Structure probing data (2A3) for a 177-nucleotide construct. Conditions: 150 mM KOAc, 10 mM MgCl2 and 150 mM bicine (pH 8.5), 24 C.
RNA sequence: GGGAACGACUCGAGUAGAGUCGAAAAGAUAUGGACGACAUUUGCUGAUGACCCAUGCUAAUCUCGGAAACGAGACAACAUGGCAAGGCAUGUGUCGUCCUAAGUCAAAGCAGGGUUCGCCCUGCAACCACCCGUGGAACUUCGGUUCCACGGGUGGAAAAGAAACAACAACAACAAC
Reactivity to 2A3 in 0.01 (KOAc 150mM, MgCl2 10mM, bicine 150mM(pH8.5), 24C), signal-to-noise 1, nucleotides 027 to 126: g040a040u090a000u120g000g020a030c010g000a010c030a040u060u040u020g000c000u040g010a300u060g030a090c040c040c010a000u020g240c030u280a300a240u000c000u000c020g020g000a030a010a000c020g010a000g000a030c060a060a020c010a020u010g000g070c030a080a260g070g030c010a020u020g010u030g000u030c010g000u000c000c000u000a000a000g000u000c040a040a050a020g000c000a010g000g020g010u120u150c200g170c040c020c000u040g040c010a010a010